Chemical mapping of a 207-nucleotide RNA with 2A3. Conditions: 150 mM KOAc, 10 mM MgCl2 and 150 mM bicine (pH 8.5), 24 C. For 2A3 the reverse transcriptase was SuperScript II with manganese.
RNA sequence: GGGAACGACUCGAGUAGAGUCGAAAAACGUCCAGCUCCCUCGGGACCACGCUGCUCUGGGCGGAAGAGUCUUCUGACACUUCUAGCCUAUUCACGUUCGCGUCCUUGAGGCCUGGCGUAACGCGGCUCUUACCACCGGGAUGCCUCCGCUAGUCGAGUGCGAAAGGUAGUUCGCUACCUUUCGCACAAAAGAAACAACAACAACAAC
Reactivity to 2A3 in 0.01 (KOAc 150mM, MgCl2 10mM, bicine 150mM(pH8.5), 24C), signal-to-noise 1, nucleotides 027 to 156: a000c060g120u120c010c000a010g000c030u260c030c000c000u040c010g000g000g000a000c000c000a030c000g080c240u010g000c010u000c000u000g000g000g000c030g000g040a000a000g030a020g000u070c010u300u170c210u300g000a000c000a010c030u000u000c000u050a270g000c000c000u020a020u110u040c000a000c040g000u110u120c050g000c120g040u000c020c000u020u300g000a000g010g010c000c000u010g000g000c000g030u000a050a050c080g000c000g030g000c000u020c000u010u170a080c010c050a080c050c080g000g010g000a100u050g000c000c010u040c030c000g000c100u060a100g060u130c050g150a040